[RMDB]
Structure probing data (DMS and 2A3) for a 207-nucleotide construct.
The RNA was probed in 150 mM KOAc, 10 mM MgCl2 and 150 mM bicine (pH 8.5) at 24 C.
The DMS profile rests on 3,079 reads.
As a SHAPE reagent, 2A3 marks flexible, mostly unpaired nucleotides at the ribose 2'-OH.

RNA sequence: GGGAACGACUCGAGUAGAGUCGAAAAGCGCAAAUCCACAAACGCCAACGAUGAGCGUUUCGCUGUAGCCGCUUAAGGCGACAGCCGGGGCCGCCUGAGCCCUGUUACCAAAGACGGCUGGCGGGGGUAAUUACUUAUUGCUUCGGCAAUAAGUAAACAGUGAAAAACAGUUCGCUGUUUUUCACUGAAAAGAAACAACAACAACAAC
Reactivity to DMS in 0.01 (KOAc 150mM, MgCl2 10mM, bicine 150mM(pH8.5), 24C), signal-to-noise 2, nucleotides 027 to 156: g010c010g040c010a050a110a060u010c010c070a120c000a030a240a030c020g010c010c000a080a130c150g010a130u000g010a280g040c030g010u000u020u000c040g050c030u010g030u000a010g020c010c000g000c270u010u000a080a200g030g000c010g000a010c010a030g030c080c060g010g020g050g030c000c010g000c090c020u000g000a080g000c000c020c020u010g020u000u000a120c040c040a090a110a160g010a140c250g010g010c050u010g000g000c050g040g030g010g070g000u000a070a090u000u000a000c000u010u000a010u000u010g000c010u000u010c300g060g000c000a020a000u010a000a000g000u010a000a040a180
Reactivity to 2A3 in 0.01 (KOAc 150mM, MgCl2 10mM, bicine 150mM(pH8.5), 24C), signal-to-noise 3, nucleotides 027 to 156: g000c010g000c040a030a050a040u060c060c040a070c080a090a130a020c050g010c020c020a080a060c130g070a120u110g010a050g020c020g000u020u070u090c050g000c000u000g010u010a010g000c000c020g100c210u200u200a140a100g020g000c000g000a000c000a000g010c000c010g000g000g000g000c020c080g000c010c030u020g010a010g000c000c000c000u000g040u050u100a030c010c000a010a000a000g020a010c030g020g030c050u070g040g010c020g010g010g000g000g000u040a070a080u100u000a010c000u000u010a000u000u000g000c010u030u050c160g080g000c000a000a000u000a000a000g000u000a000a000a000